[RMDB]
The record gives the reactivity of an RNA of 177 nucleotides to DMS and 2A3. For DMS, 4,609 sequencing reads were counted. It was measured as part of the RMDB library OK2TST. Conditions: 150 mM KOAc, 10 mM MgCl2 and 150 mM bicine (pH 8.5), 24 C.
RNA sequence: GGGAACGACUCGAGUAGAGUCGAAAAGCUUCUCAACGUAAGUUGGAGAAACUUGCAGAUGCUGCCAUGAAGUCUAUGUAUUUAGCAGAGCGUGCUGAAGAUCGUCGUAUCAAACUGACUUCAGGACCUGUAGAGUCGAAUUCGUUCGACUCUACAGAAAAGAAACAACAACAACAAC
Reactivity to DMS in 0.01 (KOAc 150mM, MgCl2 10mM, bicine 150mM(pH8.5), 24C), signal-to-noise 5, nucleotides 027 to 126: g010c040u000u000c000u000c010a040a020c020g010u010a090a120g010u000u010g010g030a050g010a020a020a010c010u010u010g010c150a150g010a100u000g030c070u010g020c020c050a120u000g010a040a030g010u000c020u000a080u000g010u000a160u000u000u000a030g020c020a080g000a200g020c180g020u000g010c010u000g000a040a050g010a060u000c030g000u010c150g010u010a080u010c100a090a080a030c110u000g020a030c010u000u000c010a030g000g000a090c090
Reactivity to 2A3 in 0.01 (KOAc 150mM, MgCl2 10mM, bicine 150mM(pH8.5), 24C), signal-to-noise 4, nucleotides 027 to 126: g020c020u030u020c020u020c020a030a070c030g030u070a010a160g000u020u060g130g020a120g030a060a020a000c020u010u030g000c030a010g020a190u120g030c060u060g040c050c020a200u050g010a020a000g030u000c040u110a090u170g120u030a110u080u110u060a020g010c030a020g030a050g220c160g090u050g000c000u020g000a050a020g020a100u080c020g150u040c040g030u300a020u110c040a060a040a090c030u060g010a010c000u020u000c010a000g000g030a020c010